[RMDB]
RNA sequence: GGGAACGACUCGAGUAGAGUCGAAAAGGGGUCGUCCCUACCAGCGAUUGGGAGCCUUGGAUUUAUGGACCUGAAGCCUCCACGGGUCCAUUGUCAGGCUCCCAAAUCGCUGAUGGGACGACGGAGGCACCCAAAGAUGCUGUUUCGACAGCAUCAACUAUUAUGUGAAGUUCGCUUCACAUAAUAGAAAAGAAACAACAACAACAAC
Reactivity to 2A3 in 0.01 (KOAc 150mM, MgCl2 10mM, bicine 150mM(pH8.5), 24C), signal-to-noise 2, nucleotides 027 to 156: g060g000g030g000u000c000g000u010c000c000c000u020a200c100c010a000g010c000g030a020u020u050g000g000g000a040g030c020c030u160u230g190g020a120u210u300u160a010u070g000g010a010c000c000u010g020a110a020g050c000c010u040c040c010a020c000g020g000g000u010c000c000a000u000u000g010u040c090a000g000g050c000u010c040c020c020a020a000a000u010c000g000c000u000g000a000u000g000g000g000a000c000g010a000c000g000g000a000g020g000c020a080c010c010c000a000a030a100g000a010u000g000c000u000g060u020u100u150c200g110a010c000a000g010c000a000u010c000a000a000
Reactivity to DMS in 0.01 (KOAc 150mM, MgCl2 10mM, bicine 150mM(pH8.5), 24C), signal-to-noise 3, nucleotides 027 to 156: g000g010g020g020u000c010g030u010c010c000c010u000a060c040c010a020g010c000g020a060u010u000g000g000g000a020g000c010c020u010u010g040g020a050u000u010u010a020u010g010g010a030c000c000u000g010a090a140g030c030c010u000c020c030a300c060g010g040g010u000c000c000a020u000u000g010u010c020a100g030g020c010u000c000c010c000a020a000a010u000c010g030c000u000g010a010u000g000g010g010a030c000g010a000c010g010g010a040g040g020c030a120c010c020c000a070a130a190g010a050u000g010c000u000g010u000u010u000c220g040a150c000a050g000c010a050u000c020a060a240